[RMDB]
The record gives the reactivity of an RNA of 177 nucleotides to DMS and 2A3. DMS adducts were read by reverse transcription with MarathonRT. The DMS profile rests on 4,726 reads.
RNA sequence: GGGAACGACUCGAGUAGAGUCGAAAAGGCUGCUGUGUCCUGCUGAGAUAAGGCUAGGUCGAGGUGGGGCAGGUGAUUUCCAGAAACAUCCUUUCUUCUUUGGCCUUGAUUGGGAGGGUCUCCGAGAAUCAGGCCAAGAUUUCGAUCUUGGCCUGAUAAAAGAAACAACAACAACAAC
Reactivity to DMS in 0.01 (KOAc 150mM, MgCl2 10mM, bicine 150mM(pH8.5), 24C), signal-to-noise 2, nucleotides 027 to 126: g010g000c010u000g000c000u000g010u000g000u010c020c000u000g010c030u020g000a260g020a080u020a030a070g000g010c020u010a040g010g020u010c060g000a270g000g010u020g030g000g000g000c050a050g000g050u010g000a150u000u010u000c030c070a140g000a090a080a070c110a060u010c000c000u010u020u010c020u000u010c040u000u010u010g010g000c000c020u000u000g010a120u000u040g000g010g000a060g010g010g000u010c020u020c030c020g010a170g000a140
Reactivity to 2A3 in 0.01 (KOAc 150mM, MgCl2 10mM, bicine 150mM(pH8.5), 24C), signal-to-noise 4, nucleotides 027 to 126: g040g000c010u040g010c030u090g100u030g100u300c010c000u010g040c040u080g040a070g000a130u110a200a070g090g030c060u060a030g070g080u000c010g000a020g000g020u050g020g010g000g010c010a010g000g040u050g030a140u010u110u050c040c000a050g150a030a090a010c030a100u070c010c010u000u050u030c010u110u020c010u010u040u080g010g010c000c000u020u040g060a090u050u050g010g000g010a070g030g000g000u020c050u010c020c010g000a060g150a100